[RMDB]
Background
This 207-nucleotide RNA was probed chemically with 2A3.

RNA sequence: GGGAACGACUCGAGUAGAGUCGAAAACGGGUGUCGGAAGUGUUCGGUGGCGUGUCGUGGUUGAUCAGCUGGCCACGUAAAAAGCCGAUCAAAAUUUAACUGCUGAACCGCAGUACUCCCUCGCGGCUUAAGUGCCGAGAGCCGUUCUGGCAGCUUCGCUAGCUUCAAGGUUCGCCUUGAAGCUAGCAAAAGAAACAACAACAACAAC
Reactivity to 2A3 in 0.01 (KOAc 150mM, MgCl2 10mM, bicine 150mM(pH8.5), 24C), signal-to-noise 1, nucleotides 027 to 156: c080g040g000g050u050g110u090c050g010g010a050a080g050u080g000u090u050c000g010g020u100g040g050c050g010u120g010u010c020g000u000g040g070u010u070g020a070u210c020a000g000c050u090g010g000c000c000a000c000g020u110a000a080a000a120a040g010c030c000g000a010u020c080a000a160a060a090u220u280u210a030a050c010u020g000c000u080g070a080a010c080c000g000c010a000g000u010a070c030u050c020c050c020u050c010g000c000g000g010c000u040u030a110a030g100u080g080c000c000g010a020g000a000g030c020c000g030u030u000c020u000g020g050c010a010g040c080u040u030c050